[RMDB]
RNA sequence: GGGAACGACUCGAGUAGAGUCGAAAAACGGCAGGCUACGGCCUGCCGAGCGGACACUUUCAAGGGCUGCACCGCUGCCGCAAAAGCAACCCUAUGCCACCGCCCCAGCGCUGCUACGGCUGCGCAAAAAACUCAGACAGCUUCGGCUGUCUGAGAACAAUUAGAUUCACUUCGGUGAAUCUAAUUGAAAAGAAACAACAACAACAAC
Reactivity to 2A3 in 0.01 (KOAc 150mM, MgCl2 10mM, bicine 150mM(pH8.5), 24C), signal-to-noise 2, nucleotides 027 to 156: a000c010g010g000c000a000g010g010c020u100a100c280g070g010c000c000u000g000c000c000g000a000g000c000g010g010a020c000a000c190u060u080u110c090a100a040g010g000g020c020u010g000c000a020c010c010g010c030u050g050c050c020g050c060a030a030a010a030g000c010a000a030c010c020c010u000a070u090g040c030c030a100c030c050g040c010c010c010c010a050g000c010g000c000u060g010c000u020a030c210g070g010c010u030g010c000g000c010a070a030a020a020a010a030c010u010c000a000g000a000c010a000g000c020u090u110c180g130g000c000u000g000u000c000u000g000a000g000a000a000
Reactivity to DMS in 0.01 (KOAc 150mM, MgCl2 10mM, bicine 150mM(pH8.5), 24C), signal-to-noise 1, nucleotides 027 to 156: a100c020g000g000c000a020g020g030c010u000a070c300g120g030c010c000u000g070c020c000g010a000g010c010g060g020a100c060a030c040u010u000u000c050a050a120g040g000g010c000u010g000c020a040c010c000g030c020u000g010c120c050g010c080a060a050a050a120g000c010a010a030c000c020c010u000a050u000g030c050c020a030c030c030g000c020c010c020c040a140g000c040g030c020u000g000c020u000a140c210g010g010c050u010g030c020g010c040a000a020a080a040a060a070c000u000c000a000g010a000c020a000g030c010u000u000c300g040g030c000u000g000u000c000u010g010a000g000a060a070